RNA sequence: GGGAACGACUCGAGUAGAGUCGAAAAUGGAAUUGGCCAGCCUUGUCCAUGUGGAAAAGGUAAAGACCGUGUUGGCCAAGCUGGAGGCUUUUGCUGACACGGUCUGCCCGAGCAUAGGGCCCGGCGAAACGCUGUACCCAUUCGUGGGUACAGCGUUAAAAGAAACAACAACAACAAC
Reactivity to DMS in 0.01 (KOAc 150mM, MgCl2 10mM, bicine 150mM(pH8.5), 24C), signal-to-noise 2, nucleotides 027 to 126: u010g020g000a160a160u000u030g010g010c030c030a230g020c020c000u000u000g000u000c000c000a130u010g000u000g020g010a070a030a080a050g010g040u000a090a100a050g000a020c000c010g030u000g000u000u000g000g030c000c300a000a000g000c020u000g020g000a080g020g010c000u000u020u020u000g010c020u000g000a030c000a020c000g000g000u000c000u000g010c030c000c010g000a130g000c070a090u000a080g030g010g000c010c060c100g040g010c010g000a070
Reactivity to 2A3 in 0.01 (KOAc 150mM, MgCl2 10mM, bicine 150mM(pH8.5), 24C), signal-to-noise 1, nucleotides 027 to 126: u110g000g080a070a170u210u150g100g060c030c020a010g000c040c000u000u000g000u000c010c000a060u040g090u140g130g000a120a080a050a090g040g000u130a170a180a020g030a000c000c000g000u010g020u020u000g010g010c000c020a000a000g000c020u110g180g230a090g100g250c020u080u070u070u120g000c010u000g000a000c010a010c030g040g010u020c000u010g000c030c000c010g030a050g000c040a030u070a090g000g010g000c000c070c000g000g000c050g020a040